[RMDB]
RNA sequence: GGGAACGACUCGAGUAGAGUCGAAAACUUCUUUGGAAAUUAGAGUUGAAACACCCACUAUAUCGAUGGAGGAUGCUCAACCUCUCUAUAUGUCGAAUGCCUCUUCUUUGGCUCCUCAAGAGAUAUAGGUGCAUGUAUAGUUCGCUAUACAUGCACCAAAAGAAACAACAACAACAAC
Reactivity to 2A3 in 0.01 (KOAc 150mM, MgCl2 10mM, bicine 150mM(pH8.5), 24C), signal-to-noise 3, nucleotides 027 to 126: c040u190u060c030u150u100u100g120g080a120a170a130u080u050a110g010a000g070u040u050g060a110a130a000c050a050c000c070c010a030c040u030a050u010a000u030c040g010a020u100g060g010a000g010g000a040u150g000c030u030c120a060a070c030c030u030c030u010c020u040a040u020a060u300g100u050c040g070a110a040u060g040c000c000u060c000u130u030c040u050u070u050g000g000c000u030c000c000u020c000a030a020g050a010g010a040u000a000u030a120
Reactivity to DMS in 0.01 (KOAc 150mM, MgCl2 10mM, bicine 150mM(pH8.5), 24C), signal-to-noise 2, nucleotides 027 to 126: c040u000u010c020u000u000u010g000g010a100a100a140u000u000a080g000a020g000u000u000g020a080a080a110c160a090c020c010c000a180c120u000a030u010a040u000c030g000a190u000g020g010a030g010g020a050u010g040c030u000c100a060a080c090c050u010c030u010c070u010a040u000a080u010g000u010c050g020a110a070u010g010c020c010u010c080u000u000c060u000u010u000g000g000c030u000c000c000u000c020a020a040g000a290g000a020u000a020u000a020

The data come from the RNA Mapping Database (RMDB), library OK2TST. This 177-nucleotide RNA was probed chemically with 2A3 and DMS. 2A3 is a SHAPE reagent: it acylates the 2'-hydroxyl of flexible nucleotides of all four kinds. Reactivities are given for positions 27 through 126.